[RMDB]
RNA sequence: GGGAACGACUCGAGUAGAGUCGAAAACUUUGGCUUUGACUUGAAGAUUGAUCCUUUAAACCUGCAUCAAGUGAGCUGUAAAGUUGCUGGAAAGGAGGCUUUGGGCAUUGGACUGACCGACUGUACAUCCCCCUAAAGGGUUCGCCCUUUAGGGGGAAAAAGAAACAACAACAACAAC
Reactivity to DMS in 0.01 (KOAc 150mM, MgCl2 10mM, bicine 150mM(pH8.5), 24C), signal-to-noise 1, nucleotides 027 to 126: c120u000u000u000g010g010c030u000u000u000g030a050c010u040u020g020a040a040g050a110u010u000g000a050u010c060c040u000u020u000a070a060a260c130c000u000g030c050a230u000c020a050a090g010u000g000a040g020c050u000g000u020a080a050a050g010u000u000g000c020u000g010g020a050a090a090g000g000a070g000g020c050u000u000u000g030g000g020c060a110u000u000g020g000a100c010u000g010a070c050c000g000a070c070u030g000u000a050c140a150